Structure probing data (DMS and 2A3) for a 177-nucleotide construct. For DMS the reverse transcriptase was MarathonRT. Conditions: 150 mM KOAc, 10 mM MgCl2 and 150 mM bicine (pH 8.5), 24 C.

[RMDB]
RNA sequence: GGGAACGACUCGAGUAGAGUCGAAAAAAAGAUAUGGACCCGUAACUCGCUUGGAUUUAUGGGAGCGCACACAUCGGAAACGAUGUGGAUCUCCCAUUGUCAGCGAGGAGAAGGGUCCUAAGUCAAACCCUACUAUCAUGUUCGCAUGAUAGUAGGGAAAAGAAACAACAACAACAAC
Reactivity to DMS in 0.01 (KOAc 150mM, MgCl2 10mM, bicine 150mM(pH8.5), 24C), signal-to-noise 4, nucleotides 027 to 126: a060a080a130g010a050u010a300u010g000g010a030c000c000c010g010u000a140a250c000u000c000g000c010u010u010g020g000a020u000u000u000a000u010g010g000g010a010g020c230g020c300a260c000a010c000a010u000c000g010g000a150a120a280c010g020a010u000g000u000g000g000a190u000c000u000c000c000c000a000u000u000g020u000c000a030g000c000g000a010g010g010a060g020a100a190g000g000g000u010c000c000u000a000a090g030u000c020a110a120a160
Reactivity to 2A3 in 0.01 (KOAc 150mM, MgCl2 10mM, bicine 150mM(pH8.5), 24C), signal-to-noise 4, nucleotides 027 to 126: a000a000a020g090a030u090a060u100g000g000a010c010c020c020g000u030a050a040c000u000c000g040c050u140u270g300g010a120u300u300u120a030u080g030g010g000a010g010c050g060c040a040c000a000c000a080u000c000g020g040a060a070a050c010g000a000u000g000u000g020g000a010u000c000u000c020c000c010a000u000u000g000u000c020a020g000c010g000a010g000g000a010g000a010a000g000g020g000u000c000c000u000a030a000g030u000c010a020a030a160